[RMDB]
Chemical mapping of a 177-nucleotide RNA with DMS and 2A3. 2A3 adducts were read by reverse transcription with SuperScript II with manganese. For DMS, 957 sequencing reads were counted.
RNA sequence: GGGAACGACUCGAGUAGAGUCGAAAAGAUGAUGGUAAGUCAUUCGACAGCCUGAAGGAUGAGAUAGCUAAACGGAACCCUAUCCAUGCUACAAGCAAAACACUAGGAUACGGUCAUGACUCUAUCCUCACAGCGGAGAGUUCGCUCUCCGCUGUGAAAAAGAAACAACAACAACAAC
Reactivity to DMS in 0.01 (KOAc 150mM, MgCl2 10mM, bicine 150mM(pH8.5), 24C), signal-to-noise 1, nucleotides 027 to 126: g000a040u000g000a030u000g000g010u000a000a300g000u000c000a000u020u000c100g010a210c140a180g000c110c070u000g000a140a030g020g000a170u000g000a070g000a070u000a040g000c040u000a090a060a000c300g000g000a070a110c100c080c000u000a030u000c000c000a200u000g000c000u000a020c170a070a250g080c020a000a050a160a050c190a070c100u100a090g000g000a030u020a010c220g150g020u000c020a000u060g000a070c020u000c000u000a010u040c000c000
Reactivity to 2A3 in 0.01 (KOAc 150mM, MgCl2 10mM, bicine 150mM(pH8.5), 24C), signal-to-noise 2, nucleotides 027 to 126: g050a050u140g000a020u030g000g050u180a160a050g020u030c000a030u250u090c080g080a050c030a000g020c000c050u000g090a120a060g090g000a030u060g030a040g020a090u060a000g020c220u250a160a160a100c100g060g010a020a070c010c020c030u010a000u000c060c000a020u040g120c000u150a210c010a150a000g060c070a090a080a010a000c090a000c100u160a140g000g000a040u020a170c100g060g030u030c040a090u130g020a000c000u000c000u080a010u000c000c000